[RMDB]
Conditions: 150 mM KOAc, 10 mM MgCl2 and 150 mM bicine (pH 8.5), 24 C. This 177-nucleotide RNA was probed chemically with 2A3. Reactivities are given for positions 27 through 126. The 2A3 profile rests on 688 reads.
RNA sequence: GGGAACGACUCGAGUAGAGUCGAAAAUUGGUUACCAAGCAUGUUGUGAAAGGGAAAUGCAUGCUAUUUGACCUUUAUUUGCAGCAAGAUCAAUCUGAGAAGGAGUAUUUUAAGCCUUUAAUGGGAGGGCGAAAAACCAUUUCGAUGGUUUUUCGCCAAAAGAAACAACAACAACAAC
Reactivity to 2A3 in 0.01 (KOAc 150mM, MgCl2 10mM, bicine 150mM(pH8.5), 24C), signal-to-noise 2, nucleotides 027 to 126: u090u090g120g010u100u060a120c040c040a110a000g000c000a010u030g050u120u150g090u300g180a200a130a060g140g010g000a090a090a000u060g000c000a000u010g000c000u060a120u110u020u070g040a050c000c000u000u010u000a040u040u070u150g040c010a020g000c010a000a250g020a020u060c000a040a050u000c050u120g020a040g040a130a050g020g040a050g080u090a150u000u180u000u080a150a080g030c040c000u050u050u140a030a010u130g000g050g000a060g040